[RMDB]
RNA sequence: GGGAACGACUCGAGUAGAGUCGAAAAGCCGUAAAGCGCCCUGGCAUUGCCUGAGGAUAGACGAGGAAGCACACGUCCCUCCCCAGCAAGACUCCGCUUUCUUUUGGGGCCUGCAGGUGGAGCUGACCAUAGGAGGACGUUUCGACGUCCUCCUAUGAAAAGAAACAACAACAACAAC
Reactivity to DMS in 0.01 (KOAc 150mM, MgCl2 10mM, bicine 150mM(pH8.5), 24C), signal-to-noise 4, nucleotides 027 to 126: g020c000c000g010u040a070a090a080g010c050g010c020c010c000u000g010g000c020a100u010u010g020c020c040u020g040a100g000g000a030u000a060g000a070c040g020a100g030g020a080a100g010c070a090c100a100c050g000u000c010c120c070u010c020c020c020c030a090g010c090a050a030g010a120c020u000c060c050g000c170u030u020u040c110u010u000u030u010g000g040g000g000c040c010u000g000c060a060g010g000u010g000g000a050g010c040u010g010a160c150
Reactivity to 2A3 in 0.01 (KOAc 150mM, MgCl2 10mM, bicine 150mM(pH8.5), 24C), signal-to-noise 6, nucleotides 027 to 126: g030c000c010g060u090a040a100a030g050c030g030c010c010c020u020g040g010c060a130u050u220g020c010c020u050g030a070g040g020a070u090a120g050a050c050g010a020g060g040a050a090g020c030a020c010a010c120g030u030c000c010c000u020c020c000c000c000a020g020c030a050a030g020a120c010u010c030c040g060c040u060u190u110c020u050u170u130u160g010g000g010g000c010c000u040g010c000a040g010g040u100g040g000a000g000c030u030g050a060c010

Conditions: 150 mM KOAc, 10 mM MgCl2 and 150 mM bicine (pH 8.5), 24 C. This 177-nucleotide RNA was probed chemically with DMS and 2A3. 2A3 adducts were read by reverse transcription with SuperScript II with manganese.